[RMDB]
RNA sequence: GGGAACGACUCGAGUAGAGUCGAAAAGCUGACGUCGUCCGGCUCGACCGCGGGGAACAUCGCGACCCGCAGCUGGUUUCGGCCCAGUUUGCGAUACGGCUCGGUGUCGACGAUGCCGUUAGCCCGCAUCAAUCGUUACUUUCGAGUAACGAUUGAUAAAAGAAACAACAACAACAAC
Reactivity to DMS in 0.01 (KOAc 150mM, MgCl2 10mM, bicine 150mM(pH8.5), 24C), signal-to-noise 7, nucleotides 027 to 126: g010c020u000g000a060c110g010u010c070g020u000c030c030g010g000c020u010c080g000a100c100c080g020c010g010g000g010g010a130a140c060a060u000c070g000c040g000a120c030c010c010g020c110a020g010c000u000g000g010u000u000u000c040g030g000c080c070c070a070g010u000u000u010g030c050g010a070u010a060c030g000g000c030u010c010g010g000u010g010u010c090g000a080c020g010a020u000g010c080c030g000u000u000a120g000c000c010c000g010c120
Reactivity to 2A3 in 0.01 (KOAc 150mM, MgCl2 10mM, bicine 150mM(pH8.5), 24C), signal-to-noise 6, nucleotides 027 to 126: g010c000u020g020a030c030g050u070c010g030u030c040c020g020g010c030u050c050g100a090c030c050g000c020g010g000g010g030a110a120c030a140u140c070g020c070g080a090c020c010c020g000c010a010g000c000u040g080g000u070u130u130c060g070g000c010c000c010a030g030u080u160u150g020c020g020a020u020a160c020g010g000c020u000c010g080g020u180g050u110c020g020a150c030g010a020u110g010c000c010g010u010u020a030g050c000c010c010g030c020

The record gives the reactivity of an RNA of 177 nucleotides to DMS and 2A3. The RNA was probed in 150 mM KOAc, 10 mM MgCl2 and 150 mM bicine (pH 8.5) at 24 C. Reactivities are given for positions 27 through 126. The 2A3 profile rests on 18,605 reads. DMS (dimethyl sulfate) methylates the pairing face of unpaired adenines and cytosines.